[RMDB]
RNA sequence: GGGAACGACUCGAGUAGAGUCGAAAAAACGCUUUAAGCUGGCACAGGCGGCGUUUUCCAGUCUUAAUGACCGCACCCAGGAAAGCCUCACCAGUAUCCGCAUGAUCAAAGCCUUUGGUCUGGAAGAGAAUUCCCGUUUUUUCGAAAACGGGAAUUCAAAAGAAACAACAACAACAAC
Reactivity to DMS in 0.01 (KOAc 150mM, MgCl2 10mM, bicine 150mM(pH8.5), 24C), signal-to-noise 1, nucleotides 027 to 126: a000a010c020g050c020u000u000u070a120a160g020c020u000g000g000c170a040c180a110g000g020c030g000g000c020g020u000u000u000u020c130c020a030g020u000c020u000u010a060a100u010g020a100c090c010g010c090a100c060c010c010a230g000g000a080a040a100g000c020c020u000c180a120c010c040a040g010u030a180u000c000c020g020c090a040u070g000a050u020c030a000a090a170g020c160c190u020u000u010g030g020u000c010u000g000g020a190a130g010a180